[RMDB]
RNA sequence: GGGAACGACUCGAGUAGAGUCGAAAACAGCUCUGAAGUCCUUUGUGUAAGUCGCGCCGCCUUUUGGCGAGAGGAGCCAUACGAAAGCGGAUGGCCGGCAAAAGCUCCCAGCGCGCGAGUUGAGAGGACAUAUAGCAGGUUUCGACCUGCUAUAUGUAAAAGAAACAACAACAACAAC
Reactivity to DMS in 0.01 (KOAc 150mM, MgCl2 10mM, bicine 150mM(pH8.5), 24C), signal-to-noise 9, nucleotides 027 to 126: c110a120g010c040u000c030u010g010a090a110g000u000c010c010u010u000u020g020u010g000u010a040a040g020u030c010g010c010g010c010c010g010c030c000u010u000u020u030g010g020c010g010a100g000a240g000g010a070g010c010c050a090u010a100c130g010a090a110a140g010c030g010g000a120u010g010g010c020c020g000g000c090a040a060a110a140g000c080u000c010c010c010a150g000c030g010c000g020c000g000a080g010u010u010g010a080g010a050g010g000
Reactivity to 2A3 in 0.01 (KOAc 150mM, MgCl2 10mM, bicine 150mM(pH8.5), 24C), signal-to-noise 7, nucleotides 027 to 126: c020a020g040c030u020c050u150g100a100a030g050u040c000c000u020u090u060g150u030g030u080a050a080g090u040c010g000c010g000c030c010g040c010c000u130u230u150u300g020g010c020g000a020g010a030g030g020a020g000c000c010a040u080a090c050g120a150a100a060g080c040g030g080a070u090g160g050c000c010g010g020c030a030a110a010a010g010c010u000c000c020c000a020g000c010g000c000g000c000g020a030g010u080u110g110a090g000a020g030g030